RNA sequence: GGGAACGACUCGAGUAGAGUCGAAAAAGCUGCCGGGAUUGAGGGUCUGCACAAUGGCGAGCCUGUCCGGAGGGGCGCGCCGCGGCCAGACAGCCAUGCUCUGUGCGGUGUGGACAGAGGGCACAUUCAGCCCUGGAGGAGCGCACUCAGACUCCCCUCUCGGAGAUAUUUUCGAAUAUCUCCGAGAAAAAGAAACAACAACAACAAC
Reactivity to 2A3 in 0.01 (KOAc 150mM, MgCl2 10mM, bicine 150mM(pH8.5), 24C), signal-to-noise 1, nucleotides 027 to 156: a000g040c050u170g000c010c000g040g060g020a130u050u030g050a050g020g050g030u050c060u040g040c040a090c050a090a140u160g020g000c010g000a030g060c080c000u030g050u060c010c000g000g010a050g020g020g010g050c030g000c000g000c000c000g000c000g010g000c030c010a030g010a060c030a020g080c120c000a090u170g010c030u000c050u010g070u120g000c060g010g030u050g010u040g000g000a010c010a010g120a040g010g020g000c040a040c010a110u280u300c060a080g010c010c000c010u050g000g010a150g020g000a040g000c010g000c000a030c030u080c040a000g050a160c010u010c000c000c000c000
Source: RMDB library OK3TST, as collected in RNAgym. An RNA of 207 nucleotides, treated with 2A3 and read out base by base. 2A3 adducts were read by reverse transcription with SuperScript II with manganese. Reactivities are given for positions 27 through 156.